Description: Structure probing data (2A3) for a 177-nucleotide construct. Reactivities are given for positions 27 through 126. Source: RMDB library OK1LIB, as collected in RNAgym.

RNA sequence: GGGAACGACUCGAGUAGAGUCGAAAACAACGUUGCCUCCAGCGUUUCGACUUCCGCUGCCCAGCAGCGCCGUCGCGUUUGCUUCACACUCUCUCUUGGAGAAGCAGAAAAUAAUCACGGGAGUGUAGACCCUAGUGCUGUUCGCAGCACUAGGGUCAAAAGAAACAACAACAACAAC
Reactivity to 2A3 in 0.01 (KOAc 150mM, MgCl2 10mM, bicine 150mM(pH8.5), 24C), signal-to-noise 1, nucleotides 027 to 126: c070a000a000c000g020u050u060g040c000c010u000c000c000a000g050c010g000u000u040u160c040g000a040c000u140u090c000c040g040c000u090g000c300c070c010a130g020c000a040g070c000g030c040c060g040u120c120g000c000g000u000u000u080g030c000u000u070c000a080c000a050c040u000c000u010c000u000c050u080u300g040g040a000g000a090a000g090c050a070g140a000a040a000a000u300a090a060u190c090a060c030g000g000g000a000g000u040g000u000a000